Structure probing data (DMS and 2A3) for a 207-nucleotide construct. For DMS the reverse transcriptase was MarathonRT. Source: RMDB library M2RFPK, as collected in RNAgym. The DMS profile rests on 2,043 reads. 2A3 adducts were read by reverse transcription with SuperScript II with manganese. Values are in units of 0.01, from 0 to 300, in steps of 10.
[RMDB]
RNA sequence: GGGAACGACUCGAGUAGAGUCGAAAAGAAUUGGUAUGUAAGCUACUUCUUCCAGUAGCUGCGUCAUAACAUCAAGGUUAUGCAUUCUGAGCCGAAGCUCAGCUUCGGUCCUCCAAGGAAGACCAAAUACAGCUCAGCCCGUUCGCGGGCUGAGCAAGUAAUGAUAUCCCUUCGGGGAUAUCAUUACAAAAGAAACAACAACAACAAC
Reactivity to DMS in 0.01 (KOAc 150mM, MgCl2 10mM, bicine 150mM(pH8.5), 24C), signal-to-noise 1, nucleotides 027 to 156: g000a090a090u010u020g000g030u010a010u010g000u020a240a170g010c010u000a010c030u000u010c070u000u010c110c120a300g040u000a030g050c000u000g010c010g040u000c010a050u000a000a030c010a300u010c260a140a130g010g030u020u000a010u010g010c030a080u020u000c000u010g000a130g030c030c000g000a070a010g000c020u000c130a120g000c050u000u000c010g010g000u000c020c020u000c070c000a140a200g000g000a030a050g010a100c090c020a070a050a090u010a110c090a230g000c000u000c000a010g010c000c000c000g050u010u000c300g020c070g120g000g020c020u010g000a010g000c000a000a000
Reactivity to 2A3 in 0.01 (KOAc 150mM, MgCl2 10mM, bicine 150mM(pH8.5), 24C), signal-to-noise 3, nucleotides 027 to 156: g070a010a100u040u030g000g000u030a010u010g000u010a000a010g000c000u000a000c010u040u120c000u010u000c010c000a010g010u000a000g000c000u000g000c000g000u000c000a000u000a010a010c020a080u240c210a160a030g300g000u000u000a000u020g000c000a000u040u000c010u010g000a000g000c010c000g010a000a000g000c040u080c300a040g000c000u010u000c000g010g000u000c000c010u060c030c020a050a040g000g000a000a000g000a000c020c070a030a100a020u170a150c060a020g000c010u020c000a000g010c000c010c020g010u070u100c120g010c030g080g000g050c000u000g000a000g000c000a010a000